[RMDB]
RNA sequence: GGGAACGACUCGAGUAGAGUCGAAAAGAUAUGGAGUAGCGUGCCAGCUCCCUUUCGGAAACGAAAGGAGCGGUAAUUCGUCUACUCCUAAGUCAAAUCUUCGAAGACGUUCGCGUCUUCGAAGAAACUGUUAGAUGUUGUUCGCAACAUCUAACAGAAAAGAAACAACAACAACAAC
Reactivity to 2A3 in 0.01 (KOAc 150mM, MgCl2 10mM, bicine 150mM(pH8.5), 24C), signal-to-noise 3, nucleotides 027 to 126: g040a040u080a050u140g000g010a010g000u000a010g010c000g010u030g050c050c070a100g010c030u030c070c040c000u000u000u000c010g020g030a080a100a100c010g010a000a000a020g010g000a010g000c010g000g010u060a080a140u130u110c020g140u030c080u000a000c000u000c010c000u000a070a000g020u000c030a040a030a230u010c010u000u000c000g010a000a010g000a010c010g030u030u080c300g030c000g100u000c000u000u010c010g010a000a000g000a000a000a000
Reactivity to DMS in 0.01 (KOAc 150mM, MgCl2 10mM, bicine 150mM(pH8.5), 24C), signal-to-noise 4, nucleotides 027 to 126: g000a050u010a300u000g000g000a010g020u000a010g030c020g010u000g000c030c010a140g020c000u000c120c040c070u000u000u000c000g020g000a060a110a160c010g000a010a020a020g000g000a020g020c000g010g010u000a020a090u010u010c010g010u010c000u000a010c000u000c000c000u000a010a070g010u000c030a100a100a170u000c010u000u000c000g000a020a000g000a000c010g030u000u010c200g020c020g000u000c000u000u000c000g000a000a000g000a000a050a140
Overview:
Conditions: 150 mM KOAc, 10 mM MgCl2 and 150 mM bicine (pH 8.5), 24 C. An RNA of 177 nucleotides, treated with 2A3 and DMS and read out base by base. For 2A3 the reverse transcriptase was SuperScript II with manganese. Reactivities are rounded to 0.1 and cut off at 0 and 3. Source: RMDB library TTRDEL, as collected in RNAgym.